[RMDB]
RNA sequence: GGGAACGACUCGAGUAGAGUCGAAAAGGAAACCUGGAGGAAGUCGAGGUCGGGGGGGAACCGCUGCUUCACCCACAGCGCAUCACUGGCGUCCAGCGGAGAAACAGGAGCUCGUCUCCUUCCUUUCGAUUUUAUGACUGUUCGCAGUCAUAAAAUCAAAAGAAACAACAACAACAAC
Reactivity to DMS in 0.01 (KOAc 150mM, MgCl2 10mM, bicine 150mM(pH8.5), 24C), signal-to-noise 1, nucleotides 027 to 126: g010g000a100a070a210c050c040u000g020g010a050g000g010a030a120g020u000c080g000a090g000g030u000c010g000g010g020g000g000g010g000a090a090c120c060g000c030u010g000c080u000u010c030a160c040c030c090a110c180a030g010c070g010c090a090u020c060a080c110u000g010g000c110g010u010c110c030a060g030c050g010g000a140g010a090a050a060c140a070g010g000a040g000c010u000c130g000u000c010u000c000c030u000u010c030c020u000u020u000c050
Overview:
This 177-nucleotide RNA was probed chemically with DMS. The RNA was probed in 150 mM KOAc, 10 mM MgCl2 and 150 mM bicine (pH 8.5) at 24 C. Source: RMDB library VIROID, as collected in RNAgym. Values cover nucleotides 27 to 126.